[RMDB]
RNA sequence: GGGAACGACUCGAGUAGAGUCGAAAAGGACCGGCUGAGGGGUCCGACAUAGCCUCAGCAUCUAGCCUGUCACUCACCAGGCGAAUCAAGUGAGUGUUGAUGCUUUUGCAUCUUAAUCUGACUGAGUCGUAGCAGUCUCAUGAACUAUGACGUUAGAAUCCUAAAUUACGUUCGCGUAAUUUAGGAUAAAAGAAACAACAACAACAAC
Reactivity to DMS in 0.01 (KOAc 150mM, MgCl2 10mM, bicine 150mM(pH8.5), 24C), signal-to-noise 1, nucleotides 027 to 156: g020g010a070c000c000g070g050c030u000g010a050g020g020g030g030u000c060c060g000a070c060a110u010a120g030c010c000u020c010a030g000c030a180u020c150u020a200g000c000c000u000g030u000c030a040c000u000c000a040c070c020a060g050g000c020g040a050a100u020c070a070a070g000u000g000a030g040u000g020u000u010g000a060u000g020c000u010u030u010u020g010c070a080u000c000u010u010a060a240u000c000u020g040a100c040u020g100a150g040u000c050g010u000a020g010c000a100g030u010c100u000c120a120u000g000a060a100c020u000a060u000g000a040c010g000u000u000a020g030a110
Reactivity to 2A3 in 0.01 (KOAc 150mM, MgCl2 10mM, bicine 150mM(pH8.5), 24C), signal-to-noise 3, nucleotides 027 to 156: g000g000a000c010c000g010g030c000u000g000a000g060g000g010g000u000c000c000g000a010c020a100u200a050g030c000c000u000c000a000g000c000a010u090c020u050a020g010c000c020u010g020u050c000a000c000u000c000a000c000c010a030g000g000c090g010a050a080u100c090a140a000g000u000g000a000g000u000g030u090u080g000a000u000g000c060u120u220u260u300g000c010a000u010c000u020u100a120a160u130c160u100g010a010c010u000g000a010g000u000c000g000u010a000g000c010a020g020u010c080u060c230a100u280g090a030a010c000u000a020u020g010a000c000g010u010u150a080g070a180